[RMDB]
RNA sequence: GGGAACGACUCGAGUAGAGUCGAAAAAAAAAGCGUGUAGAAAGGAGACCAGAAGUCUGCUUUUCAAACAGAGUGGAACCGCGCGGUUACACGCACUCUGUCAAAAAGAUCGAAAGAUCAAAAAAAAACAUUCUAUUAUGUUCGCAUAAUAGAAUGUAAAAGAAACAACAACAACAAC
Reactivity to DMS in 0.01 (KOAc 150mM, MgCl2 10mM, bicine 150mM(pH8.5), 24C), signal-to-noise 1, nucleotides 027 to 126: a020a050a030a020a120g020c050g010u000g020u000a130g000a000a000a040g000g020a060g000a020c000c010a200g000a100a250g000u010c040u000g000c020u000u000u000u000c050a100a180a020c000a010g000a020g020u010g010g010a090a030c040c000g010c210g000c140g010g010u000u000a050c090a110c180g020c000a010c020u000c000u010g000u020c190a090a110a080a100a060g000a010u000c010g010a080a040a130g000a010u020c010a010a000a010a010a000a010a040a120
Structure probing data (DMS) for a 177-nucleotide construct.
The DMS profile rests on 702 reads.
Values are in units of 0.01, from 0 to 300, in steps of 10.
Conditions: 150 mM KOAc, 10 mM MgCl2 and 150 mM bicine (pH 8.5), 24 C.
It was measured as part of the RMDB library M2PK90.